[RMDB]
RNA sequence: GGGAACGACUCGAGUAGAGUCGAAAAUCAUGUUUAUUCGUAAACAUGAAACGCCGCACGGCGCGCCUGGCCACCAGGGAACGUGGAUAUGGAAGGCUGAGAAUGAGGUGCCGUUCGCGGCACCUAAGGAACUAAGUGUAUUCGUACACUUAGUUCCAAAAGAAACAACAACAACAAC
Reactivity to 2A3 in 0.01 (KOAc 150mM, MgCl2 10mM, bicine 150mM(pH8.5), 24C), signal-to-noise 4, nucleotides 027 to 126: u020c000a000u000g000u000u020u020a080u040u070c160g050u040a000a000a000c000a000u010g000a080a010a000c070g040c010c010g040c050a050c090g030g000c030g010c040g030c030c000u030g090g020c030c010a050c030c010a050g040g020g080a060a020c070g060u050g010g060a090u050a070u200g100g050a040a070g020g000c040u040g050a020g060a140a120u210g050a040g070g010u020g000c000c000g010u010u050c200g000c020g030g010c000a000c000c000u010a030a050
Reactivity to DMS in 0.01 (KOAc 150mM, MgCl2 10mM, bicine 150mM(pH8.5), 24C), signal-to-noise 4, nucleotides 027 to 126: u000c000a000u000g000u000u000u000a030u000u010c180g020u010a010a000a000c010a000u010g010a010a130a200c120g010c030c030g030c180a100c120g020g010c020g030c130g000c020c020u000g000g000c040c030a110c040c020a050g010g000g010a050a050c130g010u010g000g010a100u010a090u000g000g000a170a060g010g000c030u000g010a080g000a080a120u000g010a040g000g010u000g010c000c000g020u000u010c170g020c000g010g020c010a010c000c000u000a040a060